[RMDB]
RNA sequence: GGGAACGACUCGAGUAGAGUCGAAAAGGUGGGUGGGUAGAAUAUACCAAGGCGUAAGAGUGAAACCUGGUUAAGGAACUCGGCAAAUUAGCCCCGUAACUUCGGAAGAAGGGGUGCCUGCAGCGAUACGGAGAGUACUAUUCGUAGUACUCUCCGUAAAAGAAACAACAACAACAAC
Reactivity to DMS in 0.01 (KOAc 150mM, MgCl2 10mM, bicine 150mM(pH8.5), 24C), signal-to-noise 3, nucleotides 027 to 126: g000g010u020g000g010g030u060g000g000g040u010a010g000a060a040u010a060u020a110c060c030a130a080g010g050c060g030u000a080a060g000a020g010u020g000a140a100a060c020c000u000g050g020u050u040a110a050g000g020a090a020c040u000c050g020g020c080a070a080a070u010u020a160g000c040c000c030c040g020u010a100a130c110u000u010c060g010g060a070a070g020a090a090g000g000g000g030u020g000c050c040u010g000c120a040g000c070g000a140u010
Reactivity to 2A3 in 0.01 (KOAc 150mM, MgCl2 10mM, bicine 150mM(pH8.5), 24C), signal-to-noise 2, nucleotides 027 to 126: g130g010u210g110g030g000u110g060g010g000u010a070g130a260a020u150a000u000a100c020c050a050a020g030g000c060g060u120a080a010g000a010g030u090g030a040a060a030c000c020u070g000g160u120u100a070a020g050g000a000a000c030u000c040g030g000c030a030a060a060u120u060a090g000c030c000c000c040g020u040a060a050c000u090u160c060g000g070a050a080g020a050a010g000g050g000g010u020g010c010c000u020g010c000a040g030c000g010a020u020
The data come from the RNA Mapping Database (RMDB), libraries RFM100 and RFMREP. This 177-nucleotide RNA was probed chemically with DMS and 2A3. Reactivities are given for positions 27 through 126. DMS adducts were read by reverse transcription with MarathonRT. Conditions: 150 mM KOAc, 10 mM MgCl2 and 150 mM bicine (pH 8.5), 24 C.